Chemical mapping of a 177-nucleotide RNA with 2A3 and DMS. For DMS the reverse transcriptase was MarathonRT. For 2A3, 1,138 sequencing reads were counted. Source: RMDB library M2PK90, as collected in RNAgym.
[RMDB]
RNA sequence: GGGAACGACUCGAGUAGAGUCGAAAAGCAGCAGUGAAUUAAAAUAAACAUGAAGAUCAAGAUCAAGAUACAAACGGCAAGUAUCGUUCGAUCCAUGAGCCGAAUAAUAUCACAAAGAAGAAGAAAACCAUACUCUGACAUUCGUGUCAGAGUAUGGAAAAGAAACAACAACAACAAC
Reactivity to 2A3 in 0.01 (KOAc 150mM, MgCl2 10mM, bicine 150mM(pH8.5), 24C), signal-to-noise 2, nucleotides 027 to 126: g050c030a000g050c060a030g050u020g130a070a020u060u090a050a160a080a110u190a030a080a020c000a020u060g050a050a070g010a030u010c040a070a000g010a060u040c020a050a040g000a110u050a030c010a000a200a020c040g140g010c060a080a050g000u010a010u000c000g000u070u070c050g040a000u100c050c000a020u030g030a000g100c050c010g020a000a010u080a050a030u040a030u060c030a040c040a070a180a010g060a090a020g030a030a010g100a010a190a010a000
Reactivity to DMS in 0.01 (KOAc 150mM, MgCl2 10mM, bicine 150mM(pH8.5), 24C), signal-to-noise 2, nucleotides 027 to 126: g000c030a100g000c090a130g000u000g000a080a030u000u000a030a030a180a120u010a070a050a070c080a070u000g000a140a090g010a080u000c060a040a060g040a030u000c070a120a100g020a030u000a000c050a060a060a090c060g000g000c070a110a040g050u000a020u000c010g000u000u000c130g000a020u040c040c050a060u020g020a070g020c050c040g010a080a070u040a010a060u000a030u000c010a040c070a030a050a180g010a100a040g000a070a120g010a070a080a090a180